[RMDB]
RNA sequence: GGGAACGACUCGAGUAGAGUCGAAAAACACGUCGGACGCCAGCGCCGACGCUAACGCGCUGACGACCGCCGGUAGCGUGCGCCGUUGCAAGACCAGCGAUAAUCUGCCCGCUCUGACGCAGCAGCGGUGCUUGAGAUAGUUCGCUAUCUCAAGCACAAAAGAAACAACAACAACAAC
Reactivity to 2A3 in 0.01 (KOAc 150mM, MgCl2 10mM, bicine 150mM(pH8.5), 24C), signal-to-noise 3, nucleotides 027 to 126: a000c060a000c030g030u050c020g000g020a020c020g010c060c030a030g020c030g000c070c050g080a060c010g000c030u080a080a020c040g000c000g000c020u020g030a020c010g040a050c010c010g020c000c000g050g030u050a040g050c040g030u040g030c010g000c010c010g010u020u060g010c040a110a050g030a150c020c020a010g000c020g020a020u080a160a120u100c050u120g040c020c010c020g040c010u020c030u060g040a040c030g020c070a050g010c000a000g020c030g060
Reactivity to DMS in 0.01 (KOAc 150mM, MgCl2 10mM, bicine 150mM(pH8.5), 24C), signal-to-noise 5, nucleotides 027 to 126: a100c090a120c020g010u000c010g000g000a140c020g030c050c040a020g020c010g010c010c040g000a110c220g020c130u020a080a070c220g010c020g000c010u010g010a030c010g010a080c050c020g010c040c030g000g000u000a070g010c030g010u000g010c040g020c030c010g030u010u010g020c030a070a090g010a120c090c060a040g000c050g010a110u010a090a090u010c080u000g000c060c040c040g010c050u000c040u000g010a110c090g010c090a110g000c050a040g010c070g020